The record gives the reactivity of an RNA of 177 nucleotides to DMS and 2A3.
RNA sequence: GGGAACGACUCGAGUAGAGUCGAAAAAUGGUGGAAGAGGCUGUAAAUUUAGGUUUAGCAAGCAGUUAAGUCUUUCUAUUUUUUCUUGGCUGCGCUUGAGCCUGAAUAAGAGGGACUUACGACAGGCCGGUAUUUACUACUUCGGUAGUAAAUACCGAAAAGAAACAACAACAACAAC
Reactivity to DMS in 0.01 (KOAc 150mM, MgCl2 10mM, bicine 150mM(pH8.5), 24C), signal-to-noise 5, nucleotides 027 to 126: a050u010g010g020u010g010g000a060a040g000a030g000g010c050u010g010u000a020a090a050u000u020u010a040g010g000u000u010u000a030g020c050a110a150g040c040a040g000u000u000a010a010g010u010c070u010u000u040c150u050a010u010u010u020u000u000u000c040u020u010g000g000c010u000g010c090g000c090u000u020g020a030g010c000c000u010g000a030a010u020a090a070g020a060g000g010g000a070c040u000u000a050c090g000a100c130a070g000g000c110
Reactivity to 2A3 in 0.01 (KOAc 150mM, MgCl2 10mM, bicine 150mM(pH8.5), 24C), signal-to-noise 8, nucleotides 027 to 126: a000u110g030g030u050g020g030a090a030g030a060g040g000c030u030g030u160a090a080a080u040u040u050a040g010g010u020u010u000a020g020c030a210a080g010c010a020g010u040u030a020a010g010u000c000u020u190u030c100u100a300u080u100u040u010u030u020c020u020u030g020g000c020u030g020c040g030c060u040u130g020a000g010c000c000u000g010a010a020u050a080a020g010a070g020g030g010a030c000u030u040a070c080g090a020c030a020g080g020c020
Description
It was measured as part of the RMDB library OK1LIB.